[RMDB]
RNA sequence: GGGAACGACUCGAGUAGAGUCGAAAACUAAAGAAAGUUGAUGGAAAUGAUUUCAAUAGCAUCAAGACCAUAUCUGAUUUGAUGAUUAGAGACAUGAAUUUUGAAAUGGUAAUCUCUUUAAUGGAGAUCGUAUGGAGGCAUUCGUGCCUCCAUACGAAAAAGAAACAACAACAACAAC
Reactivity to DMS in 0.01 (KOAc 150mM, MgCl2 10mM, bicine 150mM(pH8.5), 24C), signal-to-noise 1, nucleotides 027 to 126: c020u000a100a130a180g000a070a090a080g010u000u000g030a110u000g030g020a060a060a130u000g000a110u010u000u010c030a050a090u010a170g010c010a070u010c020a030a030g000a090c030c000a050u010a160u000c020u000g010a080u000u000u000g010a040u000g000a120u010u000a200g000a200g010a040c080a030u030g010a050a040u000u000u000u000g010a050a090a060u000g030g020u010a060a100u000c000u000c000u010u000u000a060a030u000g000g000a020g000a000
Chemical mapping of a 177-nucleotide RNA with DMS. The reactions ran in a buffer of 150 mM KOAc, 10 mM MgCl2 and 150 mM bicine (pH 8.5), at 24 C.